[RMDB]
RNA sequence: GGGAACGACUCGAGUAGAGUCGAAAAAGGAAUGUACAAACGGAGUAGCAGAUUUUGCAUCUACGGCUAGUUCGUGCAUUUCAUCAUUGUAUUCCUUCUCAAGUGAUUACAGUAGCACAAAGAAGAACUAGCAUCCUCGAUUCGUCGAGGAUGCUAGAAAAGAAACAACAACAACAAC
Reactivity to DMS in 0.01 (KOAc 150mM, MgCl2 10mM, bicine 150mM(pH8.5), 24C), signal-to-noise 1, nucleotides 027 to 126: a140g020g000a010a020u000g020u000a020c020a010a010a010c000g000g020a040g040u000a080g040c020a040g000a020u000u000u000u030g020c230a020u000c010u000a020c020g010g000c010u000a060g000u000u000c070g030u000g000c000a000u000u000u000c020a080u010c160a090u010u020g000u010a040u000u020c020c000u020u010c100u010c120a060a130g030u000g010a060u020u000a030c130a080g010u000a020g020c070a040c070a140a080a120g000a030a060g060a040a090
Reactivity to 2A3 in 0.01 (KOAc 150mM, MgCl2 10mM, bicine 150mM(pH8.5), 24C), signal-to-noise 1, nucleotides 027 to 126: a010g020g000a030a000u050g000u030a030c060a000a070a000c030g150g140a020g050u040a000g000c040a030g040a140u090u090u140u300g060c030a040u000c030u070a050c020g060g000c000u020a030g040u040u030c000g000u000g000c020a000u000u010u000c010a030u070c000a000u030u170g120u100a110u000u060c030c000u140u020c050u000c030a120a110g070u020g050a040u010u200a130c040a120g100u050a030g020c030a000c000a020a090a000g140a070a000g100a030a030